[RMDB]
RNA sequence: GGGAACGACUCGAGUAGAGUCGAAAACGGUUGAAUGUAGAAUGUUGCAACAAACUCAUUUCUAUCAAUUACUGACGGAGUGUUAUUUGUUGUAUCGCAAACUACACGAUAUUCAUAAAUUCCACCGAGAGCUUUAAUUCCCUGCAAGUACUGGGAACGUAGUCCUGGGAUUCGUCCCAGGACUACGAAAAGAAACAACAACAACAAC
Reactivity to 2A3 in 0.01 (KOAc 150mM, MgCl2 10mM, bicine 150mM(pH8.5), 24C), signal-to-noise 2, nucleotides 027 to 156: c020g010g000u010u050g010a030a000u060g000u010a030g000a040a030u030g000u000u040g050c000a010a000c000a000a010a000c000u000c000a040u120u300u000c020u030a130u040c020a150a200u230u190a210c150u140g010a000c000g020g000a000g010u000g040u140u140a120u050u000u010g000u000u000g010u000a030u090c040g010c000a010a020a080c010u050a000c030a000c010g020a010u020a060u110u200c020a010u110a140a160a020u020u020c000c020a030c010c030g050a060g010a010g170c010u160u200u110a010a060u110u100c000c000c000u040g040c090a110a140g040u070a160c080u090g000g000g040a020a000